RNA sequence: GGGAACGACUCGAGUAGAGUCGAAAAGGUCAUGGAGCACUUCGGUGUUCCUAGUGAGCUAAUUCAUAUUUGGUUUCAUUCUCAUGUCGAGAGCACUGUUAAGGACUCUAGGAACGGUUUGAAGUUCAUGUAAUGAUCCUUUCGAGGAUCAUUACAUAAAAGAAACAACAACAACAAC
Reactivity to DMS in 0.01 (KOAc 150mM, MgCl2 10mM, bicine 150mM(pH8.5), 24C), signal-to-noise 6, nucleotides 027 to 126: g000g000u010c030a070u010g010g000a030g010c060a020c000u000u050c130g020g000u000g010u000u000c010c000u010a030g000u000g000a040g000c070u020a080a080u020u010c170a090u030a100u030u020u010g020g000u010u010u000c040a050u010u000c010u000c050a080u020g020u010c110g000a050g000a050g030c140a060c020u000g010u040u050a100a070g000g020a150c010u010c010u000a050g010g000a040a080c070g010g010u010u010u010g000a080a100g000u010u020c070
Reactivity to 2A3 in 0.01 (KOAc 150mM, MgCl2 10mM, bicine 150mM(pH8.5), 24C), signal-to-noise 9, nucleotides 027 to 126: g080g020u070c040a050u140g010g020a020g000c030a010c030u040u070c150g090g010u020g010u010u000c000c000u000a010g040u020g020a010g020c040u060a110a080u150u120c120a090u120a190u200u130u160g110g010u070u180u070c040a050u120u000c050u010c030a110u130g130u190c100g020a020g000a010g070c040a040c110u060g050u220u130a060a020g040g010a050c010u000c020u040a020g040g040a050a040c060g060g070u040u080u140g070a060a020g010u040u080c020
The record gives the reactivity of an RNA of 177 nucleotides to DMS and 2A3.
For DMS the reverse transcriptase was MarathonRT.
The RNA was probed in 150 mM KOAc, 10 mM MgCl2 and 150 mM bicine (pH 8.5) at 24 C.